Structure probing data (2A3 and DMS) for a 177-nucleotide construct. DMS adducts were read by reverse transcription with MarathonRT. Source: RMDB library OK1LIB, as collected in RNAgym. Reactivities are rounded to 0.1 and cut off at 0 and 3.

RNA sequence: GGGAACGACUCGAGUAGAGUCGAAAACGCGCACCUUGCGGGCGACCAGCGCCGCGGCACCACCCGAGACGGGUGUGGACCGGCUGCCGUAGGUGCCCAACCCGAACGGUGUCUGGUCGGUGUCGCCAAUAGGUGCGCGUUUCGACGCGCACCUAUUAAAAGAAACAACAACAACAAC
Reactivity to 2A3 in 0.01 (KOAc 150mM, MgCl2 10mM, bicine 150mM(pH8.5), 24C), signal-to-noise 4, nucleotides 027 to 126: c030g020c000g000c010a020c000c000u030u120g020c070g030g020g000c010g010a010c020c020a030g050c020g010c010c020g080c030g020g000c020a030c040c000a020c000c000c000g070a110g070a130c230g030g020g000u050g040u140g050g040a070c010c020g030g000c050u060g040c010c010g020u050a080g010g000u040g060c000c000c000a040a080c000c010c000g020a090a030c050g010g010u050g040u040c030u020g020g000u010c050g020g020u160g030u050c030g010c040c010
Reactivity to DMS in 0.01 (KOAc 150mM, MgCl2 10mM, bicine 150mM(pH8.5), 24C), signal-to-noise 4, nucleotides 027 to 126: c090g010c100g030c010a020c000c000u010u010g060c230g000g000g000c020g010a060c040c020a070g000c050g000c010c030g010c110g020g020c060a110c070c010a060c070c030c030g000a150g010a120c110g010g000g000u000g020u030g050g010a100c030c040g020g020c030u000g020c040c030g000u000a080g000g010u000g000c030c010c090a150a120c070c010c070g010a150a160c040g000g010u000g020u040c010u000g000g010u010c000g030g000u010g030u020c070g010c010c150